[RMDB]
RNA sequence: GGGAACGACUCGAGUAGAGUCGAAAAUUUUUGUGGGAACAAAGACAAUCUCAUGUGUUAUAUACAGAUACUCCACUCACUUGGCUCACGUUUCCUGCAUGGCCACAGUGGGCAUUUGAGUUCAAGAUUUCUGGUUUAGGUUACCAAAAGCCCCUGAUCGAGCUAUAUUAUUCGUAAUAUAGCUCGAAAAAGAAACAACAACAACAAC
Reactivity to DMS in 0.01 (KOAc 150mM, MgCl2 10mM, bicine 150mM(pH8.5), 24C), signal-to-noise 1, nucleotides 027 to 156: u010u000u000u000u010g020u000g020g040g040a140a190c040a080a080a170g020a040c050a040a140u010c060u000c090a120u010g030u020g020u000u010a180u000a110u020a120c050a080g000a120u000a110c030u000c020c050a070c000u030c020a050c030u000u010g050g030c020u010c030a030c030g020u010u000u010c060c030u000g000c040a060u010g010g000c040c040a010c110a050g000u000g000g000g000c010a020u000u010u000g010a070g000u000u030c040a080a120g020a150u000u000u010c010u000g010g000u000u000u000a070g000g020u000u000a050c040c030a030a040a090a160g030c000c010c000c060u000g130a190
Reactivity to 2A3 in 0.01 (KOAc 150mM, MgCl2 10mM, bicine 150mM(pH8.5), 24C), signal-to-noise 2, nucleotides 027 to 156: u060u110u080u070u060g060u080g000g050g090a020a030c020a080a190a060g120a020c040a030a080u040c040u060c120a100u120g060u020g050u170u100a180u000a050u050a190c010a040g040a010u080a040c020u010c070c010a010c020u020c010a010c020u020u020g180g000c010u020c090a040c000g020u040u200u160c020c030u100g230c180a150u120g010g020c010c000a020c020a050g020u010g010g010g040c020a040u070u040u040g020a000g010u030u060c010a020a060g010a050u010u130u000c030u030g000g000u010u140u080a070g000g080u030u040a000c000c040a060a060a000a000g110c020c020c030c040u110g010a010